[RMDB]
RNA sequence: GGGAACGACUCGAGUAGAGUCGAAAAGAGAAACGCCCAUCCCAGGGCAGUGUAAGGCCCCAGGAGUGAUUCCGUUCUGUCCAAUUCAACAGUCAGUUAUUGAAUAGUCCUGGCCACUGAGGUUUGGUGCUAAGUAGCUGUGGGGAAUAAGAAUAAAUACUAUGAAAAUGUUCGCAUUUUCAUAGUAAAAAGAAACAACAACAACAAC
Reactivity to 2A3 in 0.01 (KOAc 150mM, MgCl2 10mM, bicine 150mM(pH8.5), 24C), signal-to-noise 3, nucleotides 027 to 156: g120a010g050a030a100a050c150g020c000c010c010a040u050c030c010c000a020g020g000g000c010a010g010u090g020u090a090a100g050g000c040c010c030c040a020g030g000a020g020u120g050a040u090u020c000c000g020u050u030c000u000g040u000c030c040a100a110u110u200c040a080a080c010a030g050u050c000a000g010u060u090a040u070u080g030a070a030u010a040g050u050c010c010u020g000g030c030c010a010c070u120g050a100g070g000u040u110u120g070g000u080g040c010u050a010a050g030u030a070g060c020u030g010u070g030g000g020g040a020a010u090a030a030g060a010a020u240a110a050a210
Reactivity to DMS in 0.01 (KOAc 150mM, MgCl2 10mM, bicine 150mM(pH8.5), 24C), signal-to-noise 2, nucleotides 027 to 156: g020a140g000a090a090a130c090g050c040c000c030a130u000c010c000c040a290g010g010g030c030a030g030u010g030u000a130a110g010g000c020c050c010c020a080g010g000a100g020u010g000a200u010u000c030c020g000u000u000c000u010g000u010c030c010a100a210u000u020c050a040a040c020a070g000u000c090a100g010u000u010a050u000u000g010a050a110u000a070g020u000c020c000u000g000g020c050c020a080c050u010g020a120g000g010u000u010u000g010g030u000g000c020u010a050a160g010u000a080g030c010u010g020u010g020g010g000g010a060a070u000a050a110g000a100a100u000a060a100a190
Structure probing data (2A3 and DMS) for a 207-nucleotide construct. The reactions ran in a buffer of 150 mM KOAc, 10 mM MgCl2 and 150 mM bicine (pH 8.5), at 24 C. DMS adducts were read by reverse transcription with MarathonRT. For 2A3, 1,378 sequencing reads were counted.